[RMDB]
RNA sequence: GGGAACGACUCGAGUAGAGUCGAAAAGAGCGAUUAGACAAAGGGGUAGAGCUACAUAUUAGAUAGCUGUAUAAUCGUUCAAGUUACAUCAAAACAUCUUCAAUAUUUAUUACUUACUUUCCUUUUUGCCAGAGUACGGUAUUCGUACCGUACUCAAUUCUACGAGAUACUUCGGUAUCUCGUAGAAAAAAGAAACAACAACAACAAC
Reactivity to DMS in 0.01 (KOAc 150mM, MgCl2 10mM, bicine 150mM(pH8.5), 24C), signal-to-noise 1, nucleotides 027 to 156: g010a080g010c000g000a080u000u010a030g020a070c030a030a080a050g000g000g050g020u000a100g040a030g000c020u020a040c060a160u000a200u000u020a080g020a240u000a020g050c020u010g020u000a010u010a030a060u000c020g000u010u000c040a100a110g000u010u010a080c050a100u010c060a080a090a150a100c020a050u000c080u000u000c070a050a110u000a110u000u000u010a050u010u000a050c070u000u000a070c050u000u000u010c010c020u010u010u010u000u000g010c030c120a130g010a020g040u000a010c000g030g030u000a040u010u010c300g010u000a010c000c020g010u000a000c000u010c010a000a070
Reactivity to 2A3 in 0.01 (KOAc 150mM, MgCl2 10mM, bicine 150mM(pH8.5), 24C), signal-to-noise 4, nucleotides 027 to 156: g010a000g000c000g000a000u000u020a010g040a080c090a080a220a070g000g040g000g010u120a050g030a000g060c000u030a010c020a120u260a170u230u170a090g120a230u010a000g010c000u000g010u010a030u000a010a010u000c000g000u000u000c020a010a010g020u070u090a060c040a080u140c050a040a090a100a100c020a070u080c070u250u120c090a110a140u060a180u150u150u100a140u150u120a060c010u080u050a030c000u060u090u060c020c020u060u080u040u140u090g080c090c070a040g000a000g010u000a000c000g000g000u000a020u000u030c050g020u010a000c000c000g000u010a000c000u000c000a000a000